This 177-nucleotide RNA was probed chemically with 2A3 and DMS. The RNA was probed in 150 mM KOAc, 10 mM MgCl2 and 150 mM bicine (pH 8.5) at 24 C. DMS adducts were read by reverse transcription with MarathonRT. For 2A3, 46,380 sequencing reads were counted. It was measured as part of the RMDB library OK2TST. For 2A3 the reverse transcriptase was SuperScript II with manganese.
[RMDB]
RNA sequence: GGGAACGACUCGAGUAGAGUCGAAAACAUUUGCGGAUAGGUCGUGGCAUAGGUCAGGAGAUAGGUGGCGACAGCCGAAACCAGCAUUGUGAGCGUGAAGAUGGCACGGCCGCCAUAGCGGUCCGCAGCUAGGUAAAUGAUUCGUCAUUUACCUAGCAAAAGAAACAACAACAACAAC
Reactivity to 2A3 in 0.01 (KOAc 150mM, MgCl2 10mM, bicine 150mM(pH8.5), 24C), signal-to-noise 9, nucleotides 027 to 126: c030a080u120u110u170g010c010g010g010a030u040a110g040g010u020c010g020u020g050g030c020a030u040a090g100g050u050c020a020g040g060a070g020a080u130a080g010g060u020g030g000c030g040a080c090a030g000c010c010g020a090a020a020c020c010a010g060c050a060u050u150g130u070g100a060g060c050g020u070g050a040a030g100a080u030g010g050c010a000c000g000g010c020c010g000c010c000a060u100a040g100c110g030g010u000c000c000g000c010a010
Reactivity to DMS in 0.01 (KOAc 150mM, MgCl2 10mM, bicine 150mM(pH8.5), 24C), signal-to-noise 9, nucleotides 027 to 126: c080a140u000u010u000g020c020g010g000a030u000a070g020g030u000c020g030u000g000g000c020a060u000a090g020g010u000c030a100g010g010a090g010a110u000a070g010g030u000g000g010c030g010a130c300a130g010c020c010g010a060a100a090c040c020a090g010c080a130u000u000g010u000g000a110g010c040g010u000g010a060a080g010a060u000g000g000c030a050c040g000g000c000c010g010c060c090a100u000a090g010c110g010g020u000c010c020g010c040a070
Description: The DMS profile rests on 27,664 reads.